Source: RMDB library M2RFPK, as collected in RNAgym. This 207-nucleotide RNA was probed chemically with DMS and 2A3. The 2A3 profile rests on 8,227 reads. 2A3 adducts were read by reverse transcription with SuperScript II with manganese. Conditions: 150 mM KOAc, 10 mM MgCl2 and 150 mM bicine (pH 8.5), 24 C.

RNA sequence: GGGAACGACUCGAGUAGAGUCGAAAAGCGAAAGUUGCCAUGAGACCGUAACUUUCGUAGUCAUUGAUAAAGGGGCAGGUCUCGCUCUUUUAUCAUUGCGGUUGCCUAGAGGCAUGGUCGUUUACCGAAAAGAGCUCAUUCUUCGGAAUGAGCUCAACAUAUGCUUAGCGUUCGCGCUAAGCAUAUGAAAAGAAACAACAACAACAAC
Reactivity to DMS in 0.01 (KOAc 150mM, MgCl2 10mM, bicine 150mM(pH8.5), 24C), signal-to-noise 4, nucleotides 027 to 156: g020c010g010a000a010a040g010u000u000g020c000c040a190u010g000a160g010a080c060c080g020u000a020a020c010u000u010u000c000g030u010a050g000u000c100a090u000u010g010a030u000a000a020a030g010g010g000g030c000a120g040g010u010c090u010c080g000c020u000c000u000u000u010u000a010u010c010a020u000u010g010c030g020g000u000u010g010c020c080u010a140g010a220g010g000c060a080u000g020g010u000c030g020u000u000u000a120c030c000g010a090a070a110a170g010a030g020c000u000c000a020u000u000c000u000u010c300g030g010a030a010u000g010a010g010c010u000c000a000a030
Reactivity to 2A3 in 0.01 (KOAc 150mM, MgCl2 10mM, bicine 150mM(pH8.5), 24C), signal-to-noise 6, nucleotides 027 to 156: g010c010g000a000a000a000g000u010u010g010c030c020a120u170g070a060g030a200c050c050g000u010a000a000c000u000u010u000c000g000u000a030g030u020c020a010u010u000g000a000u010a000a010a000g010g010g000g000c010a020g040g220u090c070u050c090g010c000u000c010u000u000u000u010a000u000c000a010u010u040g020c000g090g020u050u060g010c000c000u120a120g030a130g070g030c040a030u060g030g000u020c010g000u020u020u040a300c030c020g010a080a050a020a060g010a010g000c010u000c000a000u010u000c010u030u090c220g060g000a000a000u000g010a000g040c000u010c000a000a000
Reactivities are given for positions 27 through 156.